[RMDB]
RNA sequence: GGGAACGACUCGAGUAGAGUCGAAAAACCUCGCUGUUUUCUUGGCUAACUUUCAGCGAGGUGAGGCAAGGCGGCAAAAAAAAGUUGGGAGCAGCAACGGCAAGCAAAAACAAAGUUCCAGCCGAGGCACUUAGUGCAAGCUUCGGCUUGCACUAAAUUACUAACAUACUUUCGAGUAUGUUAGUAAAAAAGAAACAACAACAACAAC
Reactivity to DMS in 0.01 (KOAc 150mM, MgCl2 10mM, bicine 150mM(pH8.5), 24C), signal-to-noise 1, nucleotides 027 to 156: a040c000c000u000c020g020c010u000g000u000u000u010u000c010u000u010g050g020c040u000a010a040c020u000u000u000c000a060g000c020g060a030g030g030u000g000a030g000g010c040a070a070g020g040c040g000g030c000a010a020a000a080a020a040a030a090g030u010u010g000g000g010a080g010c070a090g030c000a060a050c000g050g010c050a110a110g010c070a000a030a060a050a100c060a080a080a120g000u010u000c010c040a130g010c020c020g010a090g030g000c060a050c060u000u000a030g010u010g000c000a040a040g040c000u000u010c220g020g030c010u000u000g000c000a030c010u000a000a010a080
Reactivity to 2A3 in 0.01 (KOAc 150mM, MgCl2 10mM, bicine 150mM(pH8.5), 24C), signal-to-noise 1, nucleotides 027 to 156: a010c000c000u000c000g010c010u010g050u050u040u050u020c080u130u260g100g020c040u060a060a030c020u040u030u010c010a010g000c000g000a020g000g000u000g000a030g030g060c090a060a040g020g000c040g030g030c110a050a020a000a000a000a000a110a000g030u070u000g020g010g000a030g060c060a010g000c010a090a000c040g000g020c010a020a010g010c020a060a050a050a000a060c040a020a080a010g010u070u050c090c030a000g050c030c000g050a070g040g040c040a010c110u040u020a000g000u000g000c000a030a030g000c000u030u060c140g010g000c000u000u000g030c020a000c000u010a000a000a000
Chemical mapping of a 207-nucleotide RNA with DMS and 2A3. It was measured as part of the RMDB library M2RFPK.